[RMDB]
RNA sequence: GGGAACGACUCGAGUAGAGUCGAAAAGAUAUGGAGCGUCACCAGAGCGCCAGAUGGAGAGGGUCCAUCGGAAACGAUGGUGAAAGCCUCCAUCUGGAACUACGCUCUGCAAGUCGCUCCUAAGUCACUCAUCCCUUAAGUUCGCUUAAGGGAUGAGAAAAGAAACAACAACAACAAC
Reactivity to DMS in 0.01 (KOAc 150mM, MgCl2 10mM, bicine 150mM(pH8.5), 24C), signal-to-noise 2, nucleotides 027 to 126: g030a060u010a300u010g010g000a020g030c000g010u000c040a210c300c030a010g020a000g020c030g020c030c030a040g010a010u000g000g000a060g010a140g030g000g020u010c000c000a010u000c010g000g010a060a150a150c000g010a020u000g000g010u000g050a110a140a300g010c190c010u030c000c000a000u010c000u000g000g000a060a020c150u060a300c050g010c000u000c000u000g010c160a110a090g000u000c020g000c000u000c000c000u000a010a100g020u000c080a210
Reactivity to 2A3 in 0.01 (KOAc 150mM, MgCl2 10mM, bicine 150mM(pH8.5), 24C), signal-to-noise 2, nucleotides 027 to 126: g050a020u130a060u170g000g010a010g000c000g010u010c010a090c110c010a020g000a000g000c020g000c010c000a000g000a010u000g060g000a040g040a120g080g080g180u110c010c000a010u020c000g020g000a120a100a010c020g000a000u000g010g080u210g140a280a060a030g200c010c000u000c000c000a010u000c000u030g010g030a010a020c040u170a020c030g000c000u000c020u020g000c020a150a300g050u020c000g000c000u000c000c000u000a010a020g000u000c000a040